The data come from the RNA Mapping Database (RMDB), library RNAMAK. An RNA of 207 nucleotides, treated with 2A3 and read out base by base. Reactivities are given for positions 27 through 156.
[RMDB]
RNA sequence: GGGAACGACUCGAGUAGAGUCGAAAACACACAGAUCUUCGGAUCUGUGUGAAAAAAACCUUUGUGAUGCGGGAGUUCGUGGCAGCCCAUUGGGCUGUCCACGGAACGAAGAACGCAUCACUCUGGUAAAAAACGAGGGAGCUUCGGCUCCCUCGAAGUUAUGAAAAUUGUUCGCAAUUUUCAUAACAAAAGAAACAACAACAACAAC
Reactivity to 2A3 in 0.01 (KOAc 150mM, MgCl2 10mM, bicine 150mM(pH8.5), 24C), signal-to-noise 1, nucleotides 027 to 156: c000a000c000a010c000a000g000a000u030c010u110u100c170g070g000a000u030c000u000g000u050g000u010g000a000a000a000a000a000a000a000c000c000u000u020u010g010u000g000a000u020g010c020g020g000g030a070g020u010u000c000g000u000g000g000c000a000g010c000c010c090a240u180u280g010g000g010c000u020g070u150c020c000a000c000g020g030a000a000c000g010a080a000g010a010a010c010g010c000a010u000c010a000c000u000c010u000g000g000u030a140a070a070a050a000a000c010g000a000g000g010g000a000g000c000u050u150c300g100g010c030u080c000c000c000u000c000g000a000a000